[RMDB]
RNA sequence: GGGAACGACUCGAGUAGAGUCGAAAAGCCAUUGCCGAAGUGAUACCCAGGUUCGACUUCGCCCCUAUCGUAGGCGUGCUUGCCCCUGUCGGCACGCCAAAGCCGAUGAUCGACAAGAUCGCCGAGGGAGCGGACGUUAGUUCGCUAACGUCCGCUCAAAAGAAACAACAACAACAAC
Reactivity to DMS in 0.01 (KOAc 150mM, MgCl2 10mM, bicine 150mM(pH8.5), 24C), signal-to-noise 1, nucleotides 027 to 126: g000c080c020a090u000u010g000c050c040g030a170a110g030u020g010a120u000a120c040c030c080a130g000g000u010u000c030g010a030c120u000u000c060g020c100c000c000c040u000a050u010c100g000u020a170g010g010c020g030u000g010c000u000u010g010c030c120c100c100u010g000u010c060g000g000c000a030c000g020c000c020a030a030a130g000c170c000g010a040u000g030a080u000c040g000a140c180a050a090g000a070u000c000g030c060c000g000a110g000g000
Structure probing data (DMS) for a 177-nucleotide construct. DMS adducts were read by reverse transcription with MarathonRT. The RNA was probed in 150 mM KOAc, 10 mM MgCl2 and 150 mM bicine (pH 8.5) at 24 C. Source: RMDB library OK2TRN, as collected in RNAgym.